[RMDB]
Chemical mapping of a 177-nucleotide RNA with DMS and 2A3.
The data come from the RNA Mapping Database (RMDB), library M2PK90.

RNA sequence: GGGAACGACUCGAGUAGAGUCGAAAAAGAACUAGCGAUUGUAAAAGGCUGUUAGCGCUAAGAUAUGGAAUUAGCGCAAAUAGGUCCGAAUUCCUUGAUAACAUUUCGGACAACCGCGCUAAAACAAUAUCAGGUUAGUUUUCGAACUAACCUGAUAAAAAGAAACAACAACAACAAC
Reactivity to DMS in 0.01 (KOAc 150mM, MgCl2 10mM, bicine 150mM(pH8.5), 24C), signal-to-noise 3, nucleotides 027 to 126: a120g000a140a100c120u000a060g040c030g020a100u000u000g020u020a070a100a170a110g000g010c020u010g030u000u000a070g000c060g000c010u010a020a040g010a150u010a160u020g000g000a120a140u000u000a000g000c000g030c000a030a040a070u000a050g010g030u000c000c010g000a020a030u000u000c080c100u000u000g030a090u010a100a150c140a060u010u000u010c000g020g000a010c010a030a050c090c080g000c000g020c080u010a010a050a060a080c150a080a100
Reactivity to 2A3 in 0.01 (KOAc 150mM, MgCl2 10mM, bicine 150mM(pH8.5), 24C), signal-to-noise 2, nucleotides 027 to 126: a000g030a060a000c060u030a010g010c010g060a070u020u260g050u230a080a100a030a050g050g000c030u010g050u050u020a030g000c000g010c020u040a000a030g030a170u130a110u300g110g030a070a110u030u000a010g000c020g000c010a000a000a000u030a010g000g000u000c010c000g000a010a040u090u110c030c000u070u130g060a020u060a100a080c070a130u050u040u030c010g000g000a000c010a010a030c010c030g000c010g000c000u070a090a090a000a030c040a050a070
For DMS the reverse transcriptase was MarathonRT. For 2A3 the reverse transcriptase was SuperScript II with manganese. Conditions: 150 mM KOAc, 10 mM MgCl2 and 150 mM bicine (pH 8.5), 24 C.